[RMDB]
RNA sequence: GGGAACGACUCGAGUAGAGUCGAAAAGGCUGUUUCGCGACGCGCUGGCGGCCGGAACCACAGCCGAGCAGCUCCUCAUGUUCGACCUUCUCCCCCCAAAGGACGUGCCGGUGGGAAGCGACGUGCAGACGGGUGAAGUUUUCGAACUUCACCCGUCAAAAGAAACAACAACAACAAC
Reactivity to DMS in 0.01 (KOAc 150mM, MgCl2 10mM, bicine 150mM(pH8.5), 24C), signal-to-noise 2, nucleotides 027 to 126: g000g030c000u000g000u000u010u010c110g000c100g010a110c050g000c060g030c160u000g000g000c050g000g010c020c010g010g010a040a050c120c200a080c140a110g000c000c000g000a090g000c130a190g000c030u000c020c010u010c040a050u000g000u010u000c010g020a160c040c020u000u000c070u000c020c010c000c000c020c020a100a090a020g030g020a100c070g000u000g000c030c190g000g030u000g010g000g040a110a060g010c010g000a050c120g020u030g000c070a080